Structure probing data (2A3 and DMS) for a 177-nucleotide construct. For 2A3, 2,067 sequencing reads were counted. The reactions ran in a buffer of 150 mM KOAc, 10 mM MgCl2 and 150 mM bicine (pH 8.5), at 24 C. DMS (dimethyl sulfate) methylates the pairing face of unpaired adenines and cytosines. Reactivities are given for positions 27 through 126.
RNA sequence: GGGAACGACUCGAGUAGAGUCGAAAACAGCAGGGCGCGGAUGGGCCCGGGUCGCCAACCCGCGGUGUUGUCCACCAGCAGGCAAUCCCCGGGCUUGGCAUGGGCGCUGAUGACAUCUGCCACCUGGUCAUUUUACCCGAUUCGUCGGGUAAAAUGAAAAAGAAACAACAACAACAAC
Reactivity to 2A3 in 0.01 (KOAc 150mM, MgCl2 10mM, bicine 150mM(pH8.5), 24C), signal-to-noise 1, nucleotides 027 to 126: c030a020g080c010a030g010g030g020c040g000c010g020g000a020u050g050g100g050c000c040c080g010g070g030u300c100g010c000c000a000a000c010c000c010g020c140g000g000u030g000u020u030g020u050c020c000a110c040c030a150g090c070a030g000g000c000a020a030u060c020c000c010c000g000g050g020c110u020u000g000g000c000a000u050g020g000g000c110g010c130u140g040a100u220g040a020c020a020u020c000u010g000c030c010a050c030c000u050g030g030
Reactivity to DMS in 0.01 (KOAc 150mM, MgCl2 10mM, bicine 150mM(pH8.5), 24C), signal-to-noise 3, nucleotides 027 to 126: c070a200g010c010a050g000g010g020c300g020c010g000g030a030u000g000g000g000c000c010c020g000g030g030u010c230g010c010c020a030a050c020c010c000g010c130g010g000u000g020u000u000g010u000c020c040a190c090c130a040g000c100a150g000g010c000a020a030u010c180c000c010c010g010g000g010c300u000u000g010g030c000a040u010g000g000g030c040g010c090u010g010a130u010g000a130c020a040u010c000u000g000c010c090a290c020c000u000g010g000